[RMDB]
RNA sequence: GGGAACGACUCGAGUAGAGUCGAAAAGAUAUGGAGCGAUGGACAUGCCUGAAGAGUCGGAAACGACUCGUAGGGCAACAGCCCGCUCGCUCCUAAGUCAAAAGAGGGUCAGUUCGCUGACCCUCAAUCUUAGUCACUACUUCGGUAGUGACUAAGAAAAAGAAACAACAACAACAAC
Reactivity to 2A3 in 0.01 (KOAc 150mM, MgCl2 10mM, bicine 150mM(pH8.5), 24C), signal-to-noise 1, nucleotides 027 to 126: g030a010u080a040u180g010g020a000g000c030g000a010u200g010g010a030c050a070u100g000c000c020u080g100a210a020g000a010g000u030c010g020g010a070a060a020c000g000a010c000u000c000g000u000a000g010g020g020c010a000a000c020a000g010c000c000c000g030c040u000c000g010c010u000c000c000u040a110a050g070u050c010a020a000a070a130g000a010g030g010g000u000c000a000g010u040u150c260g030c220u000g000a000c030c000c000u000c000a000a000
Reactivity to DMS in 0.01 (KOAc 150mM, MgCl2 10mM, bicine 150mM(pH8.5), 24C), signal-to-noise 4, nucleotides 027 to 126: g000a010u030a300u010g000g010a000g000c010g000a040u000g000g010a020c040a260u000g010c000c000u000g000a100a300g000a010g000u010c000g020g020a120a120a190c010g010a010c000u000c010g000u010a300g000g010g000c030a020a020c240a140g000c010c010c000g010c260u000c000g000c010u000c000c000u000a000a100g020u000c040a050a040a070a120g000a020g010g000g000u000c000a010g020u000u000c190g010c000u000g000a020c000c000c000u000c000a000a040